RNA sequence: GGGAACGACUCGAGUAGAGUCGAAAAAUACUUUACAGCAACAGUACGCCGCUAACGCAAUUGCUACCUCUGGCAUAACAAGUAUAUCGGGUAAGGGUUUCUGUUCCGCACACGCAGACGCAGAGUACGGGACCUUAUAUUUCGAUAUAAGGUCCCGAAAAGAAACAACAACAACAAC
Reactivity to 2A3 in 0.01 (KOAc 150mM, MgCl2 10mM, bicine 150mM(pH8.5), 24C), signal-to-noise 4, nucleotides 027 to 126: a000u140a030c030u050u070u030a010c030a040g030c050a030a010c010a020g060u100a030c040g020c000c030g070c130u050a090a000c060g050c140a050a210u060u130g030c010u070a060c000c020u010c030u050g020g000c040a020u040a100a030c040a070a060g050u060a080u030a010u130c080g000g000g060u070a030a100g060g010g010u020u060u030c000u010g030u070u040c060c000g020c020a000c000a010c060g020c030a000g010a080c020g010c050a020g010a010g090u050a080
Reactivity to DMS in 0.01 (KOAc 150mM, MgCl2 10mM, bicine 150mM(pH8.5), 24C), signal-to-noise 2, nucleotides 027 to 126: a080u030a060c050u000u010u000a080c140a070g000c090a050a110c070a070g010u000a070c070g000c020c000g000c070u010a010a050c100g000c050a180a100u010u000g020c060u000a090c070c040u000c080u000g000g020c060a090u040a140a080c130a070a070g060u010a000u000a120u050c060g000g020g010u000a030a040g000g000g010u000u020u000c010u000g010u000u030c050c010g000c050a060c140a030c180g020c050a050g020a020c060g010c050a100g000a090g000u020a070